An RNA of 177 nucleotides, treated with DMS and read out base by base. The RNA was probed in 150 mM KOAc, 10 mM MgCl2 and 150 mM bicine (pH 8.5) at 24 C.

RNA sequence: GGGAACGACUCGAGUAGAGUCGAAAAGCAACGGAAUUCAGGGCGUUGGCCCCGGUGGAGUUCCGAUGAGCACCGGGGAGAAGAGACUGUCUCGCAGACUAGAAGUCUCUUCUUUUCUGCUUUGAGACCAAGGCAGAAUGUUCGCAUUCUGCCUUGGAAAAGAAACAACAACAACAAC
Reactivity to DMS in 0.01 (KOAc 150mM, MgCl2 10mM, bicine 150mM(pH8.5), 24C), signal-to-noise 1, nucleotides 027 to 126: g010c040a140a120c010g010g000a020a070u000u010c020a080g000g010g010c030g010u010u010g030g000c070c010c050c040g020g020u010g020g020a110g010u000u010c030c060g000a020u010g010a240g000c040a180c080c070g020g000g010g010a060g000a020a030g020a030g010a020c030u000g000u000c030u000c140g010c190a100g000a060c070u010a140g010a170a010g000u000c010u010c010u010u000c000u000u000u000u000c020u000g010c010u000u000u000g000a100g000a200